[RMDB]
RNA sequence: GGGAACGACUCGAGUAGAGUCGAAAAGAUGGGGACAGCUUACCUGACUAUGAGACGAUGGACUCGGUCAGCAAGGUGUUUGAGGGCCUAGGCGGAGAGGUGCCGGCGGAGAACGCGCUGCAAAACAACGAGUCCGUGUUAGUGGAGCUCAUGCAAGGGAGGAAUUAUCAUUCGUGAUAAUUCCUCCAAAAGAAACAACAACAACAAC
Reactivity to 2A3 in 0.01 (KOAc 150mM, MgCl2 10mM, bicine 150mM(pH8.5), 24C), signal-to-noise 4, nucleotides 027 to 156: g040a050u060g000g000g020g040a010c030a020g030c020u040u050a140c020c050u030g040a030c030u080a070u140g060a030g020a060c070g070a070u160g040g000a020c020u000c010g010g040u080c060a000g000c030a050a080g140g000u020g020u030u050u080g090a110g030g110g000c010c060u090a110g050g000c020g060g050a130g020a040g110g050u090g040c000c030g020g010c030g020g010a060g010a060a010c000g030c030g020c040u000g000c010a060a050a070a080c060a020a030c020g010a000g000u000c000c000g000u010g010u010u040a080g020u080g050g020a010g000c020u020c040a040u120g010c040a050a040g060
Reactivity to DMS in 0.01 (KOAc 150mM, MgCl2 10mM, bicine 150mM(pH8.5), 24C), signal-to-noise 2, nucleotides 027 to 156: g000a080u020g000g000g020g030a060c030a120g020c030u010u000a130c120c030u000g010a130c040u000a060u010g010a060g030a050c050g000a070u040g020g000a130c000u000c010g000g040u000c060a280g040c080a060a060g000g050u010g020u000u010u000g010a300g010g000g060c000c020u000a110g040g030c030g010g000a150g010a120g020g010u010g070c020c000g000g060c020g000g000a300g020a040a050c050g010c000g010c010u000g000c040a060a050a080a200c060a040a100c000g010a030g020u000c010c030g050u000g000u000u000a050g070u010g010g040a070g010c040u000c030a050u010g000c080a140a220g010